[RMDB]
RNA sequence: GGGAACGACUCGAGUAGAGUCGAAAAUACUCACUGUUUAUCAUGUUCCGAUAUCGCCGCGAGCUGCUGCACAUGGGUAAGGAACAAGCCGCCGGCAUGGCGGUGGGCACUGCGGGAUCUGCGGUGGAAUGAUAGGACACUUCGGUGUCCUAUCAUUAAAAGAAACAACAACAACAAC
Reactivity to DMS in 0.01 (KOAc 150mM, MgCl2 10mM, bicine 150mM(pH8.5), 24C), signal-to-noise 2, nucleotides 027 to 126: u010a100c040u000c030a140c170u010g010u000u000u000a060u010c090a110u010g010u010u000c010c020g010a130u010a060u000c030g000c020c010g010c000g000a080g000c050u010g020c040u000g020c040a060c150a100u010g000g000g020u020a090a140g010g000a040a050c050a060a210g020c000c010g020c010c000g000g030c270a100u010g010g020c020g000g020u000g000g020g030c030a050c110u010g000c030g010g000g000a130u000c040u020g050c030g010g020u000g010g000
Reactivity to 2A3 in 0.01 (KOAc 150mM, MgCl2 10mM, bicine 150mM(pH8.5), 24C), signal-to-noise 1, nucleotides 027 to 126: u090a000c020u010c060a000c060u060g100u090u110u090a190u160c140a070u130g070u100u020c000c000g000a070u040a040u180c050g030c030c000g030c000g090a040g060c030u100g010c030u070g000c070a040c030a300u190g040g020g050u120a090a110g100g010a040a110c010a030a000g010c010c020g000c010c010g180g170c270a090u200g040g000c000g020g000u010g000g000g000c020a040c140u090g000c060g000g100g050a110u010c040u100g000c000g000g040u030g000g130
An RNA of 177 nucleotides, treated with DMS and 2A3 and read out base by base.
The RNA was probed in 150 mM KOAc, 10 mM MgCl2 and 150 mM bicine (pH 8.5) at 24 C.
For DMS, 2,151 sequencing reads were counted.